[RMDB]
RNA sequence: GGGAACGACUCGAGUAGAGUCGAAAACUGAGUGUGACAGUCUGUCAGUGAGUCUGUGUGAGACUGUGACACUCACAGAGAGUCACAGAGACACAGACUCUCUGUCACUCUGAGAGUGUCAGUGUGAGAACACGAAACGUUUCGACGUUUCGUGUUCAAAAGAAACAACAACAACAAC
Reactivity to DMS in 0.01 (KOAc 150mM, MgCl2 10mM, bicine 150mM(pH8.5), 24C), signal-to-noise 3, nucleotides 027 to 126: c000u000g000a050g020u010g020u000g010a240c020a010g010u000c050u000g010u000c020a020g000u000g000a020g010u000c010u000g020u000g000u010g020a140g030a100c010u000g010u000g000a030c030a160c010u000c010a060c180a090g000a010g010a060g030u000c010a010c020a010g000a150g000a050c030a020c020a020g000a010c010u000c000u000c000u000g000u000c020a000c020u000c010u000g000a110g000a160g000u010g000u000c010a030g010u010g000u000g000a260
Reactivity to 2A3 in 0.01 (KOAc 150mM, MgCl2 10mM, bicine 150mM(pH8.5), 24C), signal-to-noise 1, nucleotides 027 to 126: c010u040g010a000g160u160g000u060g060a010c010a020g090u010c030u110g070u040c030a030g000u000g120a020g030u000c000u030g030u010g000u010g090a210g070a080c000u000g000u000g020a000c000a000c000u020c000a020c010a010g010a000g010a000g000u020c000a000c000a010g030a020g000a020c010a000c010a040g010a000c000u020c000u000c000u000g000u010c000a010c020u050c000u000g060a080g010a000g050u100g070u010c040a050g010u010g060u090g230a100
Conditions: 150 mM KOAc, 10 mM MgCl2 and 150 mM bicine (pH 8.5), 24 C. The record gives the reactivity of an RNA of 177 nucleotides to DMS and 2A3. DMS (dimethyl sulfate) methylates the pairing face of unpaired adenines and cytosines. For DMS, 3,763 sequencing reads were counted. For 2A3, 2,054 sequencing reads were counted.